[RMDB]
RNA sequence: GGGAACGACUCGAGUAGAGUCGAAAAUCGAACACACCACCCCCUGGUUGCUGCUCUCAGGCACACCAAAUGAAAAAUUGGUGACAACCUCCACGGCGCCUGAUUUUGUAGCAUUUAAUGUCUUUCAUGCGGCCAGAGUUCGCUCUGGCCAAAAGAAACAACAACAACAAC
Reactivity to 2A3 in 0.01 (KOAc 150mM, MgCl2 10mM, bicine 150mM(pH8.5), 24C), signal-to-noise 1, nucleotides 027 to 129: u110c040g020a000a000c200a000c000a050c070c000a040c060c000c000c000c020u090g000g030u050u000g030c000u000g000c000u150c000u000c000a000g000g000c000a020c020a000c000c000a040a040a040u210g190a030a010a020a020a020u000u030g000g000u000g110a060c030a060a100c000c000u130c060c180a030c010g000g000c050g000c110c000u000g030a000u070u000u000u130g020u020a000g000c000a000u020u040u040a110a100u010g050u000c000u000u090u000c030a000u070g000c030
Reactivity to DMS in 0.01 (KOAc 150mM, MgCl2 10mM, bicine 150mM(pH8.5), 24C), signal-to-noise 2, nucleotides 027 to 129: u040c130g030a060a060c060a130c000a190c000c030a110c030c000c000c000c060u010g020g000u040u040g000c040u000g000c090u030c150u000c020a000g070g000c050a300c100a000c020c000a040a000a240u040g060a110a210a030a110a090u030u030g000g030u000g040a170c100a090a250c000c060u030c120c180a150c120g040g000c120g050c000c030u000g000a100u010u060u050u000g110u010a000g050c030a120u030u000u060a010a020u000g040u020c130u000u000u000c040a080u000g000c300
An RNA of 170 nucleotides, treated with 2A3 and DMS and read out base by base. 2A3 is a SHAPE reagent: it acylates the 2'-hydroxyl of flexible nucleotides of all four kinds. The reactions ran in a buffer of 150 mM KOAc, 10 mM MgCl2 and 150 mM bicine (pH 8.5), at 24 C.